[RMDB]
Chemical mapping of a 177-nucleotide RNA with DMS and 2A3. Source: RMDB library RFMREP, as collected in RNAgym. 2A3 adducts were read by reverse transcription with SuperScript II with manganese. The RNA was probed in 150 mM KOAc, 10 mM MgCl2 and 150 mM bicine (pH 8.5) at 24 C. For DMS the reverse transcriptase was MarathonRT.
RNA sequence: GGGAACGACUCGAGUAGAGUCGAAAACCAUUUGCUGGCAGACAAUCCAGUCUCAUUACAAGGCAAACGUGAUGGGGCUGUUUUCUGCGCUUAACCCCGUCUUCCAAUAAUUGGAAAAAUGCAGUGCCAUUAGAAGGGACUUCGGUCCCUUCUAAUGAAAAGAAACAACAACAACAAC
Reactivity to DMS in 0.01 (KOAc 150mM, MgCl2 10mM, bicine 150mM(pH8.5), 24C), signal-to-noise 4, nucleotides 027 to 126: c020c010a130u010u020u000g000c030u010g010g020c010a030g010a040c270a070a050u010c250c040a000g020u000c000u000c000a010u010u000a010c020a110a140g020g030c230a050a050a100c190g020u000g010a000u000g000g000g000g000c010u000g000u010u000u000u010c010u020g010c000g000c080u000u000a070a240c030c010c010c020g010u010c070u000u000c000c010a030a160u010a090a170u000u010g000g000a000a050a070a080a040u000g010c070a060g000u000g020c150
Reactivity to 2A3 in 0.01 (KOAc 150mM, MgCl2 10mM, bicine 150mM(pH8.5), 24C), signal-to-noise 1, nucleotides 027 to 126: c010c000a030u130u070u060g050c050u030g170g000c000a010g010a070c050a100a060u070c010c010a010g000u010c010u000c010a010u010u020a020c040a080a180g270g000c010a140a090a030c090g010u000g010a000u010g010g000g000g000c020u000g000u000u030u030u000c000u020g000c030g070c060u040u070a060a060c000c000c020c010g070u010c100u050u000c000c000a020a110u210a300a250u230u040g030g000a000a000a000a000a100u120g030c030a050g070u040g150c020